This 177-nucleotide RNA was probed chemically with DMS and 2A3. Conditions: 150 mM KOAc, 10 mM MgCl2 and 150 mM bicine (pH 8.5), 24 C. Values cover nucleotides 27 to 126. For 2A3 the reverse transcriptase was SuperScript II with manganese. The 2A3 profile rests on 16,520 reads.
[RMDB]
RNA sequence: GGGAACGACUCGAGUAGAGUCGAAAAAGAGCCGACGAACCUUCCAACCUUCCAACCUUCCAACCUUCCAACCUUCCAACCUUGCAAUCUACUCGAGAGGAGGAGGAGGAGGAGGAGGAGGACAUAACAUACACUGUAGAUUCGUCUACAGUGUAUGAAAAGAAACAACAACAACAAC
Reactivity to DMS in 0.01 (KOAc 150mM, MgCl2 10mM, bicine 150mM(pH8.5), 24C), signal-to-noise 5, nucleotides 027 to 126: a090g010a100g010c040c020g000a060c070g010a060a080c060c020u000u000c040c050a080a110c090c020u000u000c020c030a090a120c060c010u000u000c010c040a090a090c080c020u000u000c010c020a080a100c060c030u000u000c030c020a050a100c050c020u000u010g020c080a090a100u000c020u000a030c020u000c020g010a020g010a140g000g000a150g010g000a130g000g000a110g000g000a130g010g000a110g000g000a160g010g010a140g000g000a300c210a030u000a040a130
Reactivity to 2A3 in 0.01 (KOAc 150mM, MgCl2 10mM, bicine 150mM(pH8.5), 24C), signal-to-noise 7, nucleotides 027 to 126: a000g090a020g050c030c010g020a040c020g020a060a060c000c000u040u000c020c040a080a080c030c020u050u000c030c030a100a110c020c020u050u010c010c030a110a090c020c010u060u000c020c030a090a080c030c010u070u000c020c010a060a070c020c010u010u050g010c020a030a100u000c010u030a030c010u020c020g020a020g000a020g040g040a030g020g030a050g020g040a060g020g040a060g020g040a030g010g020a030g010g040a010g020g010a010c020a080u180a050a000